This 207-nucleotide RNA was probed chemically with 2A3 and DMS. DMS adducts were read by reverse transcription with MarathonRT. The reactions ran in a buffer of 150 mM KOAc, 10 mM MgCl2 and 150 mM bicine (pH 8.5), at 24 C. For 2A3 the reverse transcriptase was SuperScript II with manganese. It was measured as part of the RMDB library OK3TST.
RNA sequence: GGGAACGACUCGAGUAGAGUCGAAAACGACCAUGGUUACAGCCGCGCAAUAUUGUGUAGUGCUGUGCAACACGCGCCGAUAUUGGCUAACCAACAUACGCCGACCAGUGCUGUGUGACAUUAUACAACACUGGUGUGCACCAACUGUGAUAUACACCUGAUUCGAAAAGUUCGCUUUUCGAAUCAGAAAAGAAACAACAACAACAAC
Reactivity to 2A3 in 0.01 (KOAc 150mM, MgCl2 10mM, bicine 150mM(pH8.5), 24C), signal-to-noise 5, nucleotides 027 to 156: c090g050a040c020c080a080u100g020g020u060u050a060c040a030g000c000c020g000c030g020c030a090a140u090a250u300u110g020u050g030u120a300g010u110g080c080u060g010u040g020c050a100a130c020a020c130g030c020g020c020c020g100a110u080a150u200u200g000g000c010u020a020a010c010c000a000a070c010a090u230a060c070g020c050c040g090a050c010c000a010g010u010g000c020u010g000u000g010u020g020a030c020a090u180u250a040u120a030c000a010a000c000a010c000u000g000g000u010g010u050g020c030a050c040c030a100a080c090u080g010u030g100a110u080a010u040a220c030a000c080
Reactivity to DMS in 0.01 (KOAc 150mM, MgCl2 10mM, bicine 150mM(pH8.5), 24C), signal-to-noise 1, nucleotides 027 to 156: c000g040a070c030c030a080u000g050g030u010u000a040c040a040g020c000c090g000c020g030c010a100a170u000a090u000u000g050u010g030u000a080g040u010g000c000u000g030u000g020c040a080a050c040a010c030g010c070g000c010c000g030a080u000a090u000u000g020g020c040u000a180a090c080c040a070a120c070a160u000a080c090g050c060c030g000a030c010c010a040g010u000g040c040u000g000u020g010u010g040a170c230a140u000u000a050u010a040c020a030a040c010a010c020u000g020g040u000g010u010g010c070a060c100c040a080a130c070u000g000u010g010a130u000a060u010a110c010a110c100